The data come from the RNA Mapping Database (RMDB), libraries RFM100 and RFMREP. An RNA of 177 nucleotides, treated with 2A3 and DMS and read out base by base. DMS (dimethyl sulfate) methylates the pairing face of unpaired adenines and cytosines. For 2A3 the reverse transcriptase was SuperScript II with manganese.
RNA sequence: GGGAACGACUCGAGUAGAGUCGAAAAGUGAUGGAAUAGGUUGCCAACUGUAGUUACUCCACUCAGCACAGAAUGGCUGCGGGGAAAUAUAAUCAGACAUGCCCAAAGAAGUCUGCUUAGGGUGAAAGAGUAUUGUACAGUUCGCUGUACAAUACUCAAAAGAAACAACAACAACAAC
Reactivity to 2A3 in 0.01 (KOAc 150mM, MgCl2 10mM, bicine 150mM(pH8.5), 24C), signal-to-noise 5, nucleotides 027 to 126: g070u030g030a080u060g020g050a040a070u070a140g100g000u050u060g010c030c030a030a020c050u060g020u070a030g020u070u060a060c050u020c050c000a090c050u070c010a000g010c030a020c030a110g260a210a130u150g050g010c030u030g020c040g000g000g000g050a000a050a010u160a010u050a010a080u070c020a000g030a060c040a040u170g020c030c000c030a050a070a000g040a080a000g040u020c020u030g020c020u050u040a030g050g000g010u050g070a040a060a010
Reactivity to DMS in 0.01 (KOAc 150mM, MgCl2 10mM, bicine 150mM(pH8.5), 24C), signal-to-noise 5, nucleotides 027 to 126: g020u010g000a060u000g010g000a070a070u020a050g010g010u000u010g020c030c020a070a140c080u000g020u010a070g030u010u010a080c100u000c020c040a030c050u010c050a010g020c040a090c110a100g000a120a120u020g010g000c020u020g010c160g000g000g000g010a030a060a060u010a060u000a050a070u000c030a000g000a060c070a100u020g010c000c000c030a020a080a120g000a100a100g000u020c040u000g010c070u000u000a070g000g000g020u010g000a050a070a120